[RMDB]
RNA sequence: GGGAACGACUCGAGUAGAGUCGAAAAGUACGACAAUCAUCACAUCUGAAAAAGCAUUAAAUCAAGAAUCGUUAAAAGAAUACCAACAAAAGUAUCACUUUAUAGGAGGGACUUUAUGAUUUAUACACUGGAGUGGGUAUUUCGAUACCCACUCCAGAAAAGAAACAACAACAACAAC
Reactivity to 2A3 in 0.01 (KOAc 150mM, MgCl2 10mM, bicine 150mM(pH8.5), 24C), signal-to-noise 2, nucleotides 027 to 126: g000u100a020c020g060a010c020a010a060u070c000a040u060c020a060c000a050u020c010u080g160a030a010a150a060a000g090c000a020u160u200a050a070a070u060c090a030a030g070a090a010u020c010g070u160u290a040a090a000a150g030a080a270u100a120c010c020a050a070c070a090a020a020a020g060u000a060u100c100a100c120u120u000u000a110u050a150g010g020a000g000g030g000a000c000u050u060u020a090u030g000a000u000u000u210a060u010a000c160a000